An RNA of 177 nucleotides, treated with 2A3 and DMS and read out base by base. For 2A3, 5,777 sequencing reads were counted. Values cover nucleotides 27 to 126. DMS adducts were read by reverse transcription with MarathonRT.
RNA sequence: GGGAACGACUCGAGUAGAGUCGAAAAGCGAAAACCAAUGAUCACGCCACUUUGAUGCUCAAACUCAAAGGUGGGUUGCUCGGCGAUAGCUUCAAGCAUGGGUUUAUAGGGGCGCUGUUGGCGCGGCGUCAAUUAUCUCUUUCGAGAGAUAAUUGACAAAAGAAACAACAACAACAAC
Reactivity to 2A3 in 0.01 (KOAc 150mM, MgCl2 10mM, bicine 150mM(pH8.5), 24C), signal-to-noise 4, nucleotides 027 to 126: g060c020g090a050a030a010a090c040c010a020a100u120g040a070u100c050a000c080g070c020c000a020c030u060u030u040g040a050u130g030c040u070c170a080a050a040c020u000c020a050a050a070g270g080u080g020g030g020u050u130g000c010u010c040g070g000c030g030a050u050a070g000c000u070u070c050a040a020g040c040a040u060g060g000g010u070u110u130a180u130a090g100g010g010g000c020g000c040u060g090u110u120g040g000c020g020c040g070g050c030
Reactivity to DMS in 0.01 (KOAc 150mM, MgCl2 10mM, bicine 150mM(pH8.5), 24C), signal-to-noise 7, nucleotides 027 to 126: g000c050g000a080a060a120a130c050c030a100a130u000g000a070u000c070a080c080g000c010c010a070c030u000u000u000g010a040u000g020c090u010c230a080a080a130c090u000c020a030a040a050g010g020u000g000g000g010u010u000g010c050u010c060g010g010c080g000a070u010a090g010c020u000u000c080a080a100g000c040a050u000g010g000g010u010u000u000a080u010a140g000g000g000g010c040g020c030u010g000u000u000g000g020c080g020c050g010g010c170